[RMDB]
RNA sequence: GGGAACGACUCGAGUAGAGUCGAAAAAGAUCUUGAUGCGUUAGCUAGUGAUAUUUUUGACACUCCUAGCGUACUUCAAGCUACUCUUUCUGAGUUUUCACACUUAGCUACCUUUGCUGAGUUGGAACCAUUAGUUUCAGUUCGCUGAAACUAAUGGAAAAGAAACAACAACAACAAC
Reactivity to DMS in 0.01 (KOAc 150mM, MgCl2 10mM, bicine 150mM(pH8.5), 24C), signal-to-noise 7, nucleotides 027 to 126: a030g000a100u010c000u000u000g010a020u000g000c020g010u000u000a020g010c150u000a030g010u000g000a130u010a050u010u000u000u010u010g010a180c030a020c010u020c300c000u000a010g000c010g010u000a010c130u010u000c000a000a020g000c170u010a040c050u000c010u000u010u010c050u000g000a090g010u000u000u000u010c020a070c130a020c010u000u000a010g010c010u010a120c240c190u000u010u010g010c000u000g000a020g010u000u000g000g000a040a100
Reactivity to 2A3 in 0.01 (KOAc 150mM, MgCl2 10mM, bicine 150mM(pH8.5), 24C), signal-to-noise 6, nucleotides 027 to 126: a000g040a030u040c000u010u010g000a000u000g010c010g000u010u000a010g010c090u030a010g010u010g050a120u040a190u200u220u080u160u190g070a020c000a010c010u000c000c000u000a000g000c000g000u000a040c040u010u010c000a000a000g020c020u080a060c010u020c000u020u070u010c040u070g090a120g080u030u030u020u030c040a040c000a000c030u010u000a000g010c010u070a110c030c060u150u180u110g000c010u000g000a000g000u020u030g020g020a020a030